[RMDB]
RNA sequence: GGGAACGACUCGAGUAGAGUCGAAAAGAUAUGGAUCGAAUUGAGUACUGACCCUAGCUCCUCGGAAACGAGCCCUAGCAGUACAAUGAUGUUCGAUCCUAAGUCAAAAGCUGGCUUCGGCCAGCAACAGUGCUGUAAAGUUCGCUUUACAGCACUGAAAAGAAACAACAACAACAAC
Reactivity to DMS in 0.01 (KOAc 150mM, MgCl2 10mM, bicine 150mM(pH8.5), 24C), signal-to-noise 4, nucleotides 027 to 126: g000a060u010a300u000g010g010a010u010c000g010a010a000u000u000g000a120g020u000a020c000u000g010a220c240c170c020u000a010g010c040u020c070c020u000c000g010g000a090a080a110c010g000a020g010c300c300c000u000a020g000c010a010g020u010a000c020a180a130u030g010a080u010g000u000u000c010g010a010u000c000c000u000a010a090g010u010c030a100a060a090a110g020c000u000g000g000c000u000u010c220g000g000c020c010a010g020c000a030a040
Reactivity to 2A3 in 0.01 (KOAc 150mM, MgCl2 10mM, bicine 150mM(pH8.5), 24C), signal-to-noise 4, nucleotides 027 to 126: g030a010u070a030u140g000g020a000u000c010g000a000a020u040u040g040a040g020u000a010c000u040g250a290c100c080c000u020a010g020c030u110c080c000u020c040g020g020a040a070a050c010g010a000g000c040c020c010u020a030g060c020a000g000u010a010c020a050a300u160g080a030u110g030u000u010c010g000a010u000c000c000u000a050a010g010u020c020a000a010a040a230g000c000u010g030g000c010u050u120c300g090g000c020c010a000g000c000a000a000
Structure probing data (DMS and 2A3) for a 177-nucleotide construct.
For 2A3, 6,215 sequencing reads were counted.
DMS adducts were read by reverse transcription with MarathonRT.
It was measured as part of the RMDB library TTRDEL.